Description: This 177-nucleotide RNA was probed chemically with 2A3 and DMS. The data come from the RNA Mapping Database (RMDB), library OK1LIB. The reactions ran in a buffer of 150 mM KOAc, 10 mM MgCl2 and 150 mM bicine (pH 8.5), at 24 C. For 2A3, 5,238 sequencing reads were counted.
RNA sequence: GGGAACGACUCGAGUAGAGUCGAAAAACAAUGUGUUAUGCGGGGGCCGCAUCGUAAACCGGCGCAACGAAGUCCUGGCUGAAACGGGUGGUGCCGUCAGCGCCUUAACCCCCUCGUGAGCACACUGCAUCCUGCCUAGUUUCGACUAGGCAGGAUGAAAAGAAACAACAACAACAAC
Reactivity to 2A3 in 0.01 (KOAc 150mM, MgCl2 10mM, bicine 150mM(pH8.5), 24C), signal-to-noise 5, nucleotides 027 to 126: a000c040a050a060u060g020u000g020u060u030a150u190g000c000g000g020g000g010g020c070c050g020c060a100u070c070g160u160a050a070a110c080c020g020g000c010g000c040a030a060c060g060a040a000g050u060c020c040u080g090g000c080u100g040a090a100a070c050g020g000g030u050g010g000u050g030c000c000g010u010c010a000g000c010g060c010c030u030u110a050a030c020c000c000c000c000u010c010g010u010g040a010g000c000a000c000a000c020u070g010
Reactivity to DMS in 0.01 (KOAc 150mM, MgCl2 10mM, bicine 150mM(pH8.5), 24C), signal-to-noise 2, nucleotides 027 to 126: a130c100a100a080u000g010u010g000u000u000a040u020g010c030g000g000g020g020g000c070c100g010c060a130u030c100g030u010a060a130a190c150c000g000g000c060g050c020a170a130c140g000a060a090g000u010c050c040u010g000g050c030u000g000a000a050a060c060g010g020g010u000g040g030u000g020c030c030g020u020c020a000g000c030g000c150c070u050u010a110a130c110c040c000c000c000u000c000g020u000g000a070g000c030a030c000a060c100u000g050